[RMDB]
RNA sequence: GGGAACGACUCGAGUAGAGUCGAAAAGAUGCAGCUGCCGGUUCAUGGAUACCUCUGCAGUGCAUGUCGUAGGCUUGCACUUGCAUGGGUUUGCAUGACCCGGGAGAUGAACCCACCAUUGUCUUCCACAUACCUUACGGUUCGCCGUAAGGUAUGUAAAAGAAACAACAACAACAAC
Reactivity to DMS in 0.01 (KOAc 150mM, MgCl2 10mM, bicine 150mM(pH8.5), 24C), signal-to-noise 3, nucleotides 027 to 126: g000a120u000g010c050a020g000c010u000g000c010c020g000g000u000u000c010a020u010g000g000a020u000a010c000c010u000c270u000g010c020a000g010u000g000c010a020u000g000u010c020g010u020a140g000g000c010u000u000g000c010a010c010u010u020g040c010a020u000g000g000g000u000u000u010g010c010a010u000g000a010c040c000c000g010g000g000a010g010a030u000g000a080a140c020c000c010a160c250c170a110u000u000g000u000c060u000u000c080c140
Reactivity to 2A3 in 0.01 (KOAc 150mM, MgCl2 10mM, bicine 150mM(pH8.5), 24C), signal-to-noise 3, nucleotides 027 to 126: g070a020u160g040c020a030g000c020u090g120c000c000g000g000u000u000c010a010u000g100g100a010u040a030c000c010u010c010u020g010c000a000g000u010g000c000a000u030g050u040c150g180u150a110g040g030c000u010u010g000c010a000c000u120u170g000c000a010u030g000g020g000u010u000u020g080c000a000u010g000a010c010c000c010g000g000g000a000g000a010u020g030a030a050c010c020c020a010c030c050a150u080u160g080u020c040u070u010c060c010